Chemical mapping of a 177-nucleotide RNA with 2A3 and DMS. For 2A3, 775 sequencing reads were counted. For DMS, 1,362 sequencing reads were counted. High DMS reactivity at an A or C suggests that its Watson-Crick edge is free.
RNA sequence: GGGAACGACUCGAGUAGAGUCGAAAAGUUUAGUUCAGCUGUAUCUCUAUCAAGAUUACAGUAUACCAUCAAAUCAAUUAGCUAAUCGAAUUCGUAUUCUUUUACAAUUGAGUUCAUACGGUAUCGACUACCCCACCUGAUUCGUCAGGUGGGGUAGAAAAGAAACAACAACAACAAC
Reactivity to 2A3 in 0.01 (KOAc 150mM, MgCl2 10mM, bicine 150mM(pH8.5), 24C), signal-to-noise 1, nucleotides 027 to 126: g050u080u150u190a060g000u010u100c060a020g010c010u020g000u040a010u040c040u000c040u100a230u300c030a040a000g000a030u010u100a010c000a000g020u030a010u010a040c000c010a020u080c090a030a100a070u010c020a000a010u040u040a110g030c010u010a030a010u030c010g000a030a030u180u220c090g080u300a010u050u150c020u000u050u030u030a040c050a080a070u040u000g020a000g030u100u110c040a040u100a100c150g020g000u010a030u080c070g030a010
Reactivity to DMS in 0.01 (KOAc 150mM, MgCl2 10mM, bicine 150mM(pH8.5), 24C), signal-to-noise 2, nucleotides 027 to 126: g000u000u000u000a110g010u000u000c100a200g010c020u010g000u000a030u000c040u010c070u020a130u010c270a090a040g000a020u000u000a020c000a010g010u000a050u000a050c020c000a090u020c120a050a060a050u000c020a000a010u000u000a100g030c200u000a000a000u010c050g000a090a030u000u020c300g000u010a080u000u000c010u000u000u000u000a040c050a010a010u000u000g000a010g020u000u010c150a100u010a070c140g000g010u000a020u000c130g020a190